[RMDB]
RNA sequence: GGGAACGACUCGAGUAGAGUCGAAAAGGCCAUCGGUUCUUCCUGUCCAUUUACGAUGGCCGAGGGACAGGUUUAUAUAUCAAUCGCCGAGAGGCGUACAGUUAGAGUAGCGAGGUCGUAUGACCGGACCGCUUAGACCUCGCGAAGGUCCGGAAGAACGAGCAUAAUAUUUCGAUAUUAUGCUCGUAAAAGAAACAACAACAACAAC
Reactivity to 2A3 in 0.01 (KOAc 150mM, MgCl2 10mM, bicine 150mM(pH8.5), 24C), signal-to-noise 3, nucleotides 027 to 156: g020g000c000c000a020u000c000g120g000u140u050c020u120u030c050c020u040g040u000c050c000a130u110u140u130a060c020g000a010u000g000g000c010c000g010a060g030g020g000a000c030a040g020g040u060u210u010a090u030a040u010a000u140c030a120a040u090c030g010c000c000g060a050g000a030g050g020c010g000u000a030c020a020g020u180u120a020g030a040g060u040a020g010c010g000a000g010g020u020c080g030u230a070u110g050a100c020c040g000g020a000c020c000g010c000u000u010a010g020a050c000c000u010c010g000c010g010a020a000g020g010u000c010c000g000g030a070a030g020a010
Reactivity to DMS in 0.01 (KOAc 150mM, MgCl2 10mM, bicine 150mM(pH8.5), 24C), signal-to-noise 3, nucleotides 027 to 156: g020g060c000c000a030u000c000g000g010u010u010c080u010u000c020c040u000g010u010c020c030a200u010u000u010a030c010g010a020u000g010g080c030c020g010a030g030g010g010a080c040a070g010g000u000u000u000a100u010a130u000a090u030c070a090a150u000c030g040c010c010g020a250g000a180g030g030c010g010u000a020c070a120g030u000u000a120g000a130g020u010a170g010c020g020a190g010g040u000c010g000u010a100u000g010a100c040c020g010g000a080c020c040g010c100u000u000a090g010a030c020c010u000c010g020c010g020a090a060g020g040u000c020c010g000g010a110a090g010a120